[RMDB]
RNA sequence: GGGAACGACUCGAGUAGAGUCGAAAAUGGGUUUGAUAAGCGAGUCGAGGGAAGCAUGGUGCCUCGAUAAUAAAGUAUGCAUUAAAGAUAAACGCAGAAGAUAAUUUUGCAUUAGCAGCUUAAUUUAGCGCUGCUCAUCCUUCCUCAAUUGCCCACGCAUGGGGAAAUAGUUCGCUAUUUCCCCAUGAAAAGAAACAACAACAACAAC
Reactivity to DMS in 0.01 (KOAc 150mM, MgCl2 10mM, bicine 150mM(pH8.5), 24C), signal-to-noise 1, nucleotides 027 to 156: u000g020g000g010u000u000u000g050a110u000a120a090g000c070g000a140g030u000c000g010a240g000g020g000a100a120g040c010a040u000g030g010u000g010c040c010u000c020g020a020u000a010a020u000a040a010a100g040u010a050u020g010c020a200u010u030a130a090a140g020a200u010a040a040a070c050g050c030a050g030a020a090g020a190u030a070a230u000u000u000u000g010c010a120u000u000a070g000c030a040g020c010u000u000a080a130u000u000u000a090g030c040g020c050u000g000c020u000c020a040u010c050c030u000u000c020c030u000c030a040a110u000u010g000c000c000c010a030c300g040
Reactivity to 2A3 in 0.01 (KOAc 150mM, MgCl2 10mM, bicine 150mM(pH8.5), 24C), signal-to-noise 3, nucleotides 027 to 156: u130g010g020g030u110u080u120g160a080u090a120a090g030c000g050a020g010u040c020g040a030g000g050g010a040a030g030c090a070u110g020g010u090g080c010c000u010c030g020a030u030a060a010u030a010a040a010g050u060a100u090g010c000a030u120u140a180a130a020g110a070u180a060a120a020c090g000c020a010g010a120a010g010a050u170a210a140u110u060u060u040g000c010a010u060u030a020g000c020a010g000c010u060u030a090a030u180u130u100a060g050c020g000c050u010g010c000u020c000a010u000c000c010u020u000c000c000u020c020a030a070u090u070g040c000c000c000a010c050g020

Background
Chemical mapping of a 207-nucleotide RNA with DMS and 2A3. For 2A3, 1,213 sequencing reads were counted.